About this RNA:
The data come from the RNA Mapping Database (RMDB), library VIROID. Structure probing data (DMS and 2A3) for a 207-nucleotide construct. Values are in units of 0.01, from 0 to 300, in steps of 10. The RNA was probed in 150 mM KOAc, 10 mM MgCl2 and 150 mM bicine (pH 8.5) at 24 C. For DMS, 1,827 sequencing reads were counted. Values cover nucleotides 27 to 156.
RNA sequence: GGGAACGACUCGAGUAGAGUCGAAAACGGUUCGCUCUCGUAGUCACAGCCGCUGGGGAACCUAGGCAGAAGGCUGGACGGAGUCUUAGUCCACUCCAAAGGACCUUGGGUUUGAAACCCCCAAGAGGUCGGCACCUGACGUCGGUGUCCUGACGAAGCUUAGAGGUAACUUCGGUUACCUCUAAGCAAAAGAAACAACAACAACAAC
Reactivity to DMS in 0.01 (KOAc 150mM, MgCl2 10mM, bicine 150mM(pH8.5), 24C), signal-to-noise 1, nucleotides 027 to 156: c010g020g040u000u010c020g070c010u010c020u020c150g030u000a020g030u020c010a200c110a090g000c020c000g050c030u010g020g040g030g000a070a110c040c010u000a150g060g040c010a260g000a050a170g010g010c150u020g040g060a150c070g000g000a070g030u010c060u020u000a110g020u000c040c000a130c060u000c040c030a030a140a210g020g000a020c030c030u000u010g010g030g010u000u000u000g000a220a140a180c170c200c020c080c000a040a060g020a120g040g000u000c030g000g010c040a040c000c040u010g020a170c150g010u000c170g000g030u000g000u010c030c040u000g020a020c060g000a060a300
Reactivity to 2A3 in 0.01 (KOAc 150mM, MgCl2 10mM, bicine 150mM(pH8.5), 24C), signal-to-noise 2, nucleotides 027 to 156: c040g000g030u090u010c020g010c080u000c050u030c090g130u130a020g010u080c030a030c000a140g070c010c010g030c100u010g000g020g000g050a050a100c010c040u010a130g050g020c050a020g130a250a020g050g000c010u020g000g020a000c030g040g010a020g010u000c060u060u040a030g020u040c070c000a010c090u070c040c020a080a050a040g110g010a070c020c000u030u070g050g010g030u010u050u090g030a060a010a040c010c010c000c000c010a020a000g040a040g080g020u030c030g000g000c000a020c010c000u090g120a140c070g070u130c050g010g000u010g030u030c020c040u050g020a030c010g050a100a000